RNA sequence: GGGAACGACUCGAGUAGAGUCGAAAAGAGUUAGUAGCAACUCAUUACAGCAACUAGCAUGGGUCCUUCUUAUUGGGCAACUAAAUAGUGUUACCCAAAUUUAACAGCUGUCCACAUAGAACACUUAAACGGGAUUGAAUGGCUGAGAAGGGGAGGCUGAUAAUGGUGCCUUCGGGCACCAUUAUCAAAAAGAAACAACAACAACAAC
Reactivity to 2A3 in 0.01 (KOAc 150mM, MgCl2 10mM, bicine 150mM(pH8.5), 24C), signal-to-noise 1, nucleotides 027 to 156: g030a000g000u060u060a030g000u050a010g040c040a000a010c000u000c080a040u000u140a030c050a090g000c010a070a080c090u030a030g040c050a080u030g020g010g000u040c000c000u090u080c060u000u080a090u150u000g000g000g030c000a020a010c010u160a110a200a220u300a140g040u060g040u150u040a060c000c000c040a020a170a140u240u290u040a150a000c090a000g080c060u050g030u000c000c000a040c010a080u100a210g210a300a050c140a010c150u000u090a060a120a000c050g080g000g000a010u010u050g040a090a170u090g000g020c000u030g000a000g010a070a080g000g020g020g000a000g000g120c050